[RMDB]
An RNA of 177 nucleotides, treated with 2A3 and DMS and read out base by base. The reactions ran in a buffer of 150 mM KOAc, 10 mM MgCl2 and 150 mM bicine (pH 8.5), at 24 C. It was measured as part of the RMDB library TTRDEL. Reactivities are given for positions 27 through 126. DMS (dimethyl sulfate) methylates the pairing face of unpaired adenines and cytosines. The DMS profile rests on 995 reads.
RNA sequence: GGGAACGACUCGAGUAGAGUCGAAAAGAUAUGGAUCGAUGUACUUUUGACGUAUUUCGAUCGGAAACGAUGUACGAUAAGUAUUAUCGAUCCUAAGUCAAAAGCAACUAGGUUCGCCUAGUUGCAAUCUGACGUCUUUGUUCGCAAAGACGUCAGAAAAAGAAACAACAACAACAAC
Reactivity to 2A3 in 0.01 (KOAc 150mM, MgCl2 10mM, bicine 150mM(pH8.5), 24C), signal-to-noise 2, nucleotides 027 to 126: g060a010u080a040u170g020g000a010u000c020g030a000u000g020u020a010c020u070u250u150u210g290a160c010g010u000a070u000u100u020c180g030a190u240c170g000g080a130a160a000c010g000a010u050g000u080a000c020g040a060u000a080a020g020u010a000u300u200a000u100c000g020a000u020c010c000u020a060a030g030u000c050a000a020a090a140g020c000a010a000c010u040a000g080g000u030u100c230g160c040c020u000a040g010u000u010g020c000a000a000
Reactivity to DMS in 0.01 (KOAc 150mM, MgCl2 10mM, bicine 150mM(pH8.5), 24C), signal-to-noise 1, nucleotides 027 to 126: g010a040u000a300u000g000g010a010u010c000g010a020u030g000u000a010c000u000u000u010u010g020a210c080g010u000a000u020u000u010c060g010a020u000c140g000g000a050a120a180c020g000a010u000g000u040a020c000g020a220u030a030a020g010u000a010u000u050a010u000c000g000a020u000c000c000u020a030a150g000u000c040a060a040a090a160g000c000a010a010c000u000a010g000g010u000u010c290g000c000c010u000a000g000u010u000g000c010a010a040